[RMDB]
The record gives the reactivity of an RNA of 177 nucleotides to DMS and 2A3. For 2A3, 932 sequencing reads were counted. Values cover nucleotides 27 to 126. The RNA was probed in 150 mM KOAc, 10 mM MgCl2 and 150 mM bicine (pH 8.5) at 24 C. It was measured as part of the RMDB library OK2TRN. For DMS, 1,030 sequencing reads were counted.

RNA sequence: GGGAACGACUCGAGUAGAGUCGAAAAAUGCAUCUGUUUAGGAGAGCAAGAACUACAAAUUUGGUCUUCAGUUUGGCUUGCUUACAUCCUGAGAACUCUGUAGGCCACAUGUCGUGAAUAUAGCAGAGCGUAGUAGGGAGUUCGCUCCCUACUACGCAAAAGAAACAACAACAACAAC
Reactivity to DMS in 0.01 (KOAc 150mM, MgCl2 10mM, bicine 150mM(pH8.5), 24C), signal-to-noise 1, nucleotides 027 to 126: a060u000g000c040a130u010c050u010g010u040u020u000a030g040g000a060g000a050g010c000a030a000g000a170a070c130u000a100c070a000a040a050u000u000u000g020g010u000c130u040u000c060a100g000u000u000u000g000g030c040u000u000g020c090u000u010a020c060a080u000c030c010u000g000a060g000a070a050c050u000c020u000g010u000a060g000g020c070c010a040c100a120u000g030u000c040g040u000g000a050a050u000a110u000a130g000c030a100g000a100
Reactivity to 2A3 in 0.01 (KOAc 150mM, MgCl2 10mM, bicine 150mM(pH8.5), 24C), signal-to-noise 2, nucleotides 027 to 126: a000u080g070c000a070u020c010u100g200u140u040u120a020g000g020a050g020a020g040c000a040a040g040a100a050c070u130a040c200a050a070a160u210u080u170g020g010u160c100u210u160c010a020g030u040u030u070g040g000c040u000u000g020c000u040u080a020c010a100u030c000c000u080g050a070g040a060a020c000u080c020u050g020u080a020g110g040c100c000a020c000a050u150g060u140c110g070u020g110a160a030u260a040u070a240g070c040a020g040a000